RNA sequence: GGGAACGACUCGAGUAGAGUCGAAAACUCAGACUCGGCGAACAGUACACGCACAUCAUCUCACCUCUCGACGACACAAGCAUCGUCUCAGUGCAUCAACUGUACCCAACACCAUCCGGCCACUUCGCCUACGCAUCAACAAUCGCAGGAGAGUCUGCCGAGUGUGUUAUUUCGAUAACACACUCGGAAAAGAAACAACAACAACAAC
Reactivity to 2A3 in 0.01 (KOAc 150mM, MgCl2 10mM, bicine 150mM(pH8.5), 24C), signal-to-noise 4, nucleotides 027 to 156: c030u020c030a020g030a030c010u000c010g040g000c010g030a080a040c040a070g030u060a020c110a040c100g070c020a040c000a080u140c020a090u040c090u020c050a090c040c050u060c000u050c090g030a020c010g010a000c010a000c020a160a080g060c040a100u070c010g060u000c020u000c040a030g010u010g050c010a060u050c050a090a030c060u040g030u070a050c020c020c010a010a030c020a020c050c020a070u070c060c020g010g010c020c040a060c020u080u060c080g030c010c000u010a030c040g030c020a060u090c040a040a090c020a100a110u080c030g000c040a020g040g100a040g010a010g040u030c020u030g040
Reactivity to DMS in 0.01 (KOAc 150mM, MgCl2 10mM, bicine 150mM(pH8.5), 24C), signal-to-noise 1, nucleotides 027 to 156: c030u030c000a120g010a080c000u010c070g000g030c020g010a040a070c050a220g000u000a150c100a050c050g000c060a070c030a130u000c050a010u020c100u020c020a040c040c000u020c020u000c020g040a050c010g040a120c020a140c070a120a090g000c120a100u000c000g000u000c020u000c070a070g040u000g000c110a120u000c140a070a070c060u020g070u000a130c000c010c040a030a080c010a060c000c010a120u000c000c020g040g020c010c020a070c050u010u010c030g030c030c000u020a020c000g000c140a190u000c050a070a170c130a210a180u000c050g000c000a070g020g000a020g000a110g010u000c010u000g000
An RNA of 207 nucleotides, treated with 2A3 and DMS and read out base by base. Source: RMDB library OK3TST, as collected in RNAgym. DMS adducts were read by reverse transcription with MarathonRT. The 2A3 profile rests on 2,837 reads.